[RMDB]
RNA sequence: GGGAACGACUCGAGUAGAGUCGAAAAGCUAUCAUCAGUUCGCCGCGGUUUGCCGCAGUCACAGUGGGCAGCGGCUCAGCGGGAUCGUUGACUCGGUCUGCGCCUUGAUGUGUUGCCGGGAGAAGCAUGGAUGUGUCUUAUUCGUAAGACACAUCCAAAAAGAAACAACAACAACAAC
Reactivity to 2A3 in 0.01 (KOAc 150mM, MgCl2 10mM, bicine 150mM(pH8.5), 24C), signal-to-noise 2, nucleotides 027 to 126: g000c020u050a030u110c010a000u010c020a030g030u060u020c080g070c130c000g000c030g070g010u070u100u190g000c010c000g000c000a020g010u020c020a080c040a290g180u220g140g000g020c000a020g020c000g000g000c010u020c000a000g000c020g000g000g020a030u000c010g020u030u070g030a070c060u000c020g020g060u050c100u090g000c000g060c050c000u150u260g040a220u120g050u000g030u050u050g000c000c030g000g050g000a140g050a100a010g060c040a070
Reactivity to DMS in 0.01 (KOAc 150mM, MgCl2 10mM, bicine 150mM(pH8.5), 24C), signal-to-noise 4, nucleotides 027 to 126: g010c040u000a140u010c040a060u000c040a080g000u000u000c080g020c020c010g010c010g020g030u010u000u000g030c000c010g040c020a030g020u010c070a110c190a130g030u010g030g010g010c020a040g030c010g000g000c020u000c090a080g020c010g020g000g000a020u000c010g000u000u010g020a130c070u000c020g010g000u000c040u010g010c030g020c030c090u020u010g010a100u000g030u000g020u010u000g000c040c000g000g000g000a100g010a110a060g010c100a190